[RMDB]
RNA sequence: GGGAACGACUCGAGUAGAGUCGAAAAAUACUUCUCAGGAUGGCGCGUUGCAGUCCAACAAGAUCCAGGGACGGUACAGAAUUUUCCUAUACCUCGAGUCGGGUUUGGAAUCUAAGGUUGACUCGCUAAAACUUUACGUGGUUCGCCACGUAAAGAAGAUAGGUUACUUGUUCGCAAGUAACCUAUCAAAAGAAACAACAACAACAAC
Reactivity to DMS in 0.01 (KOAc 150mM, MgCl2 10mM, bicine 150mM(pH8.5), 24C), signal-to-noise 2, nucleotides 027 to 156: a160u000a040c040u000u000c010u000c000a160g000g020a060u000g020g030c160g030c010g040u000u000g010c050a190g060u000c040c040a050a110c040a110a300g000a080u000c030c020a120g000g030g000a030c030g030g000u010a130c050a130g000a140a070u000u000u010u000c010c000u000a090u000a070c070c000u000c050g020a030g040u010c010g020g030g040u000u000u010g000g000a130a070u010c050u000a070a080g020g010u000u010g040a060c010u000c030g020c040u010a060a040a010a160c000u010u010u010a010c010g020u010g010g030u000u000c300g040c010c000a000c000g020u000a000a000a010g000a050a050
Reactivity to 2A3 in 0.01 (KOAc 150mM, MgCl2 10mM, bicine 150mM(pH8.5), 24C), signal-to-noise 5, nucleotides 027 to 156: a000u060a020c020u030u020c010u010c000a010g050g030a070u050g060g080c040g020c050g050u050u090g030c060a070g060u070c070c010a020a020c030a040a070g040a070u000c010c020a030g000g010g010a010c060g020g020u080a060c030a090g160a210a140u050u010u000u000c000c000u040a060u050a090c010c020u020c030g010a010g020u020c020g000g000g000u040u040u040g050g020a030a020u010c030u100a110a100g110g020u110u110g030a030c000u010c030g000c010u040a100a060a060a120c000u000u000u000a000c000g000u000g020g050u020u070c150g040c060c000a000c000g000u000a000a000a000g000a000a000